Structure probing data (2A3) for a 177-nucleotide construct.
RNA sequence: GGGAACGACUCGAGUAGAGUCGAAAAAGAUAAACUUACCAAAUUGGCAAGAAGGAGAUUUGGGAUCAUCUAUUAGUGCUUAUACACUUUAUGGGUUAUCCCAGUUGGACUUCAAAAAACCAACACCACGCGUCGAUAAUUUCGAUUAUCGACGCGUAAAAGAAACAACAACAACAAC
Reactivity to 2A3 in 0.01 (KOAc 150mM, MgCl2 10mM, bicine 150mM(pH8.5), 24C), signal-to-noise 1, nucleotides 027 to 126: a000g090a000u250a020a180a080c070u160u130a030c010c000a140a000a300u130u080g000g000c110a170a070g000a010a010g060g050a040g030a030u300u180u090g000g000g000a000u000c050a000u000c010u000a010u000u020a020g000u000g000c000u300u130a080u100a140c010a000c070u070u090u030a030u050g040g000g000u000u000a000u010c000c000c020a000g000u000u000g000g230a040c000u010u000c070a050a020a050a000a000a000c010c050a030a020c000a000c060c030